[RMDB]
RNA sequence: GGGAACGACUCGAGUAGAGUCGAAAAAGCAGAGGCCUAAUGACGGCGGCUAUUUUUGAGGGACUGCAAUCCGCCGCUCUGCAUGGUGUGGCGGAGGGUGAUACCCGUCAUUGGGUUCAUCCUGUACGCCGUAUGAGUCAUUCGUGACUCAUACGGCAAAAGAAACAACAACAACAAC
Reactivity to DMS in 0.01 (KOAc 150mM, MgCl2 10mM, bicine 150mM(pH8.5), 24C), signal-to-noise 1, nucleotides 027 to 126: a220g000c000a000g000a190g010g010c040c020u000a000a060u000g000a030c080g000g000c110g000g020c090u010a030u010u020u000u100u040g020a100g060g030g010a200c110u050g000c040a060a110u030c010c020g030c070c000g000c020u010c000u000g000c300a040u030g020g040u060g010u000g060g020c020g040g010a030g020g000g050u010g000a120u050a040c080c000c000g000u000c040a040u030u070g010g000g020u000u000c040a070u050c010c000u030g000u020a080c070
Reactivity to 2A3 in 0.01 (KOAc 150mM, MgCl2 10mM, bicine 150mM(pH8.5), 24C), signal-to-noise 3, nucleotides 027 to 126: a000g130c080a030g020a020g050g000c000c020u010a090a020u070g020a020c030g030g010c020g070g010c040u060a210u070u080u020u130u130g150a170g000g080g000a060c010u060g010c040a000a110u010c000c000g000c010c000g040c000u000c010u070g220c090a160u300g020g080u030g010u020g050g000c050g010g010a040g040g050g000u080g010a020u180a180c000c000c000g020u000c020a020u000u050g020g000g000u060u040c010a090u030c020c000u030g020u050a020c120